[RMDB]
An RNA of 207 nucleotides, treated with DMS and 2A3 and read out base by base. The reactions ran in a buffer of 150 mM KOAc, 10 mM MgCl2 and 150 mM bicine (pH 8.5), at 24 C. DMS adducts were read by reverse transcription with MarathonRT. Reactivities are given for positions 27 through 156. The data come from the RNA Mapping Database (RMDB), library M2RFPK.

RNA sequence: GGGAACGACUCGAGUAGAGUCGAAAACGUUGUCAUCGACAACACCCUAUGCAUUCAUGCUCUGUAAGGAUGCGCCGAAAGGUGAGCAAGCCCGAGUUGCCCAUACCUGAAAUGCAACACUUUAGAGAAAACCCGAAGCAGUUCGCUGCUUCGGGAAGUUAGACACUUACUUCGGUAAGUGUCUAACAAAAGAAACAACAACAACAAC
Reactivity to DMS in 0.01 (KOAc 150mM, MgCl2 10mM, bicine 150mM(pH8.5), 24C), signal-to-noise 1, nucleotides 027 to 156: c130g000u000u020g010u010c020a230u010c150g000a100c000a040a050c020a090c000c010c020u000a120u000g040c030a120u010u000c040a160u030g040c030u000c050u010g010u090a300a190g010g010a030u000g010c040g000c040c020g040a070a130a110g000g060u030g000a060g020c030a160a170g000c010c020c100g060a100g000u000u000g000c000c000c040a190u010a070c040c000u000g000a040a050a110u010g020c060a070a090c070a070c050u000u000u010a080g020a160g000a160a070a040a100c000c000c010g000a060a000g010c010a050g030u000u010c300g020c040u000g010c010u000u020c000g000g010g000a000a010
Reactivity to 2A3 in 0.01 (KOAc 150mM, MgCl2 10mM, bicine 150mM(pH8.5), 24C), signal-to-noise 3, nucleotides 027 to 156: c100g000u000u000g020u020c090a180u130c300g020a000c000a000a010c000a040c000c010c010u030a030u080g010c010a000u010u020c020a100u210g000c000u000c000u000g020u010a000a030g010g000a010u010g000c000g000c000c010g060a080a060a020g000g000u020g010a000g000c030a040a010g010c010c040c020g080a050g080u020u020g050c020c020c050a020u070a170c020c040u100g070a050a080a060u100g030c000a040a050c010a060c090u100u120u160a100g040a000g000a120a080a050a050c020c000c000g000a000a010g000c010a010g010u030u150c200g050c060u000g000c000u010u000c000g000g000g000a000a000